RNA sequence: GGGAACGACUCGAGUAGAGUCGAAAAGGGGCACAUGUACGGAUACGCUCUUUGUGCAUGGCACCAUCGCCGAGUCCCACUGGAAGGCAUGACGCCAAAGGAAAUGGUUGCGGAGUACGGUCCCAGCCUGCUGGAUGGCGGUAAGACGUUCUCUAGCGGGUAAUGUCUUGUUCGCAAGACAUUACCCAAAAGAAACAACAACAACAAC
Reactivity to 2A3 in 0.01 (KOAc 150mM, MgCl2 10mM, bicine 150mM(pH8.5), 24C), signal-to-noise 1, nucleotides 027 to 156: g070g000g070g000c070a040c000a270u000g070u000a000c030g130g040a010u010a070c180g130c060u000c000u000u150u300g030u000g020c000a020u050g030g000c050a110c000c000a140u070c120g000c050c010g010a030g160u070c010c010c010a030c100u100g080g100a080a090g030g020c090a050u080g010a040c020g000c000c070a050a000a000g030g010a240a300a000u100g020g020u030u160g000c240g050g000a080g030u180a180c050g110g120u140c000c000c000a000g000c000c000u030g030c030u000g000g000a160u220g050g000c060g000g000u040a060a060g010a050c140g020u140u000c070u000c010u050a020g000c070
About this RNA: This 207-nucleotide RNA was probed chemically with 2A3. Conditions: 150 mM KOAc, 10 mM MgCl2 and 150 mM bicine (pH 8.5), 24 C. It was measured as part of the RMDB library OK3TST.